RNA sequence: GGGAACGACUCGAGUAGAGUCGAAAAAGUACAGAGCGAGUAUAUAUAGGACUAAAAAAUGACGUAACGGUUAAAGUCCACAAAAAACACCCAGAAAACCGCACGCGAACCUACGCCCAGAAACGAAUGAAGAUAACAUUUUCGAAUGUUAUCUUCAAAAAGAAACAACAACAACAAC
Reactivity to 2A3 in 0.01 (KOAc 150mM, MgCl2 10mM, bicine 150mM(pH8.5), 24C), signal-to-noise 2, nucleotides 027 to 126: a040g050u050a030c020a020g060a030g050c050g020a060g090u010a090u020a010u000a010u110a300g000g000a020c030u120a020a030a090a090a070a130u080g010a000c040g030u030a140a000c010g000g060u030u040a140a120a000g010u000c040c000a040c080a060a220a010a000a000a000c060a010c010c020c000a040g170a030a050a000a010c040c050g000c020a010c030g000c000g020a020a040c020c020u030a020c020g060c030c020c020a020g100a070a080a010c130g080a050a080
Reactivity to DMS in 0.01 (KOAc 150mM, MgCl2 10mM, bicine 150mM(pH8.5), 24C), signal-to-noise 3, nucleotides 027 to 126: a090g000u000a030c050a090g010a110g020c050g010a100g030u000a070u000a120u010a130u010a180g000g040a040c030u020a010a030a090a060a070a090u010g000a050c050g010u000a090a060c260g010g000u000u000a080a060a070g020u000c020c010a080c140a000a030a050a030a050a100c150a040c020c000c020a100g010a130a040a030a060c120c070g010c070a040c040g020c030g020a080a050c050c040u000a040c110g010c010c020c020a110g010a050a050a050c180g000a050a080